[RMDB]
RNA sequence: GGGAACGACUCGAGUAGAGUCGAAAAGAUAUGGAUGGUUAGUUAAUGUCGCAUUAGUGGAGAAGCGGUCGGAAACGACCGACUUCGUUGAAACUACUGUGCGACAUUAACUAACCAUCCUAAGUCAGCGUAUAAGAUACUUCGGUAUCUUAUACGCAAAAGAAACAACAACAACAAC
Reactivity to DMS in 0.01 (KOAc 150mM, MgCl2 10mM, bicine 150mM(pH8.5), 24C), signal-to-noise 2, nucleotides 027 to 126: g000a040u000a300u020g000g010a000u000g020g000u000u000a030g020u010u000a010a040u000g000u000c000g000c000a010u000u000a010g010u000g000g000a150g020a000a010g010c030g000g000u000c000g000g000a130a100a180c000g000a000c000c010g020a050c000u000u000c000g000u000u030g000a150a130a150c000u000a030c300u010g030u010g020c000g020a000c000a010u000u000a000a000c000u000a000a000c000c000a000u000c000c000u000a010a100g010u000c020a160